[RMDB]
Conditions: 150 mM KOAc, 10 mM MgCl2 and 150 mM bicine (pH 8.5), 24 C. This 177-nucleotide RNA was probed chemically with DMS and 2A3. For 2A3, 1,074 sequencing reads were counted. For DMS the reverse transcriptase was MarathonRT. Values cover nucleotides 27 to 126.
RNA sequence: GGGAACGACUCGAGUAGAGUCGAAAAUUUUAAUAAGAUAUUACAAAACCAACAGUACUGGUAAAGUCAACUGAAUUGGCAACAUUGCCUUUGUGGGAAAUAUCAAGACCCAUGGCCCUCAGACCCACUACAUAAUCUAGUUCGCUAGAUUAUGUAGAAAAGAAACAACAACAACAAC
Reactivity to DMS in 0.01 (KOAc 150mM, MgCl2 10mM, bicine 150mM(pH8.5), 24C), signal-to-noise 2, nucleotides 027 to 126: u020u000u000u020a070a210u000a200a220g000a150u010a070u000u000a130c020a070a060a170a110c040c010a030a150c060a110g030u000a050c020u000g000g030u010a040a070a030g000u010c000a030a040c060u000g000a110a110u000u000g000g010c010a070a090c140a100u000u000g010c000c040u010u000u000g030u000g000g000g010a030a060a050u000a060u020c080a060a060g000a130c020c020c000a050u000g000g010c020c020c010u000c050a080g010a110c030c010c040a210
Reactivity to 2A3 in 0.01 (KOAc 150mM, MgCl2 10mM, bicine 150mM(pH8.5), 24C), signal-to-noise 1, nucleotides 027 to 126: u000u100u060u100a010a050u150a150a040g020a080u120a070u280u150a070c010a000a180a020a080c000c000a010a010c010a030g050u100a050c040u000g070g050u120a120a120a080g040u020c030a040a050c060u010g050a090a150u060u020g000g000c030a060a000c050a250u110u090g000c000c010u020u030u050g060u050g000g030g000a000a130a000u100a020u060c060a050a030g010a140c020c020c060a040u050g070g030c000c000c030u040c000a010g000a050c030c000c000a010